The data come from the RNA Mapping Database (RMDB), library RNAMAK. Structure probing data (2A3 and DMS) for a 207-nucleotide construct. Reactivities are rounded to 0.1 and cut off at 0 and 3. For 2A3, 2,275 sequencing reads were counted. The reactions ran in a buffer of 150 mM KOAc, 10 mM MgCl2 and 150 mM bicine (pH 8.5), at 24 C.
RNA sequence: GGGAACGACUCGAGUAGAGUCGAAAACUUAUCCGGUUCGCCGGAUAAGGCCAGUCCUAAGUCCACUUGGAUUUAUGGAAUGCUGCCAUCGGAAACGAUGGGCAGCGAGAGAUUGUCAGUGGAUAUGGAAUUUGAUGUUUAGGUUCGCCUAAACAAACCAUCUUUUCUUCUUCGGAAGAAAAGAUGGAAAAGAAACAACAACAACAAC
Reactivity to 2A3 in 0.01 (KOAc 150mM, MgCl2 10mM, bicine 150mM(pH8.5), 24C), signal-to-noise 4, nucleotides 027 to 156: c010u000u000a010u000c000c000g020g010u060u050c280g060c060c000g000g000a010u000a000a000g030g000c020c000a030g070u030c000c000u060a140a130g030u000c010c010a030c070u120u260g220g040a100u230u300u120a150u220g120g110a130a090u210g000c000u000g000c000c000a000u000c000g020g020a080a030a060c010g020a010u050g030g190g030c000a000g000c010g010a040g010a000g000a020u120u140g100u190c010a000g000u000g000g010a000u040a030u080g040g080a040a060u170u090u260g160a120u120g030u000u020u010a010g010g040u020u070c270g090c010c010u010a000a000a010c010a040a000a000
Reactivity to DMS in 0.01 (KOAc 150mM, MgCl2 10mM, bicine 150mM(pH8.5), 24C), signal-to-noise 2, nucleotides 027 to 156: c010u000u010a000u000c000c000g010g010u000u000c300g010c020c000g100g010a000u000a000a000g010g010c080c000a170g000u000c000c000u070a040a240g020u010c000c010a060c070u000u000g010g010a040u000u000u000a140u000g040g020a270a140u010g000c010u000g040c000c000a060u010c000g080g010a210a090a300c040g040a040u010g010g020g040c000a030g060c010g020a100g020a300g000a060u000u000g010u000c030a000g010u010g040g000a050u000a270u000g000g010a020a220u020u010u040g000a090u000g020u000u000u000a020g010g030u000u010c300g030c020c000u000a020a020a010c010a040a080a240